Annotation: The record gives the reactivity of an RNA of 177 nucleotides to DMS.

[RMDB]
RNA sequence: GGGAACGACUCGAGUAGAGUCGAAAAGAUAUGGAUGUAAGGAGCGAUAAGCAUGGUUCGGAAACGAACCAAUGCUUUUGACGCUCACUUACAUCCUAAGUCAAACAGGGACGUUCGCGUCCCUGAACAUUGGGCCUACCUUCGGGUAGGCCCAAUGAAAAGAAACAACAACAACAAC
Reactivity to DMS in 0.01 (KOAc 150mM, MgCl2 10mM, bicine 150mM(pH8.5), 24C), signal-to-noise 1, nucleotides 027 to 126: g040a020u000a130u020g010g000a000u000g000u000a000a010g020g010a020g040c020g000a120u010a000a020g020c020a030u000g010g020u000u000c010g020g000a050a020a100c000g020a010a020c010c010a010a050u000g010c000u000u000u040u000g020a200c120g030c000u000c000a060c000u020u000a000c000a020u000c000c000u000a010a060g000u000c030a240a120a300c020a020g000g000g000a050c000g040u000u000c290g060c000g040u020c010c010c000u000g010a000a060
DMS adducts were read by reverse transcription with MarathonRT. The RNA was probed in 150 mM KOAc, 10 mM MgCl2 and 150 mM bicine (pH 8.5) at 24 C.